Description:
Structure probing data (DMS and 2A3) for a 177-nucleotide construct. High 2A3 reactivity points to a flexible backbone, as in loops and unpaired stretches. For DMS, 6,493 sequencing reads were counted. Conditions: 150 mM KOAc, 10 mM MgCl2 and 150 mM bicine (pH 8.5), 24 C.
[RMDB]
RNA sequence: GGGAACGACUCGAGUAGAGUCGAAAAGCCGCCGCCGCGCUCAACCAGCCCAGAUAGGGGGCGGCCGCUCCCGUCAUCGCCGUCGACGCCGCGCCCAGCCACGAGGAACCUGCCAGCCCCGCCGUCAACACACUUUAGGUUUCGACCUAAAGUGUGUAAAAGAAACAACAACAACAAC
Reactivity to DMS in 0.01 (KOAc 150mM, MgCl2 10mM, bicine 150mM(pH8.5), 24C), signal-to-noise 4, nucleotides 027 to 126: g000c030c020g030c000c020g030c020c010g020c090g030c040u000c080a120a120c150c060a120g020c000c050c050a130g020a090u010a100g010g000g010g000g030c010g000g000c040c070g000c060u000c000c010c010g000u030c050a060u000c090g020c020c020g000u020c050g000a090c100g040c050c020g020c100g000c040c010c040a100g000c030c020a060c090g030a080g000g000a080a060c010c000u000g000c020c010a080g020c030c000c000c020g000c020c060g020u050c060a090
Reactivity to 2A3 in 0.01 (KOAc 150mM, MgCl2 10mM, bicine 150mM(pH8.5), 24C), signal-to-noise 3, nucleotides 027 to 126: g030c000c010g000c010c010g150c020c010g050c000g020c010u050c020a050a080c030c050a020g030c020c030c000a030g050a110u280a240g030g000g000g000g010c000g000g010c000c020g010c030u010c000c010c000g020u020c020a070u050c010g020c030c010g040u070c030g010a060c030g010c010c010g030c010g020c000c000c000a010g020c000c010a030c020g010a070g020g010a030a050c010c030u030g010c000c010a020g020c010c000c000c010g010c020c000g030u040c020a080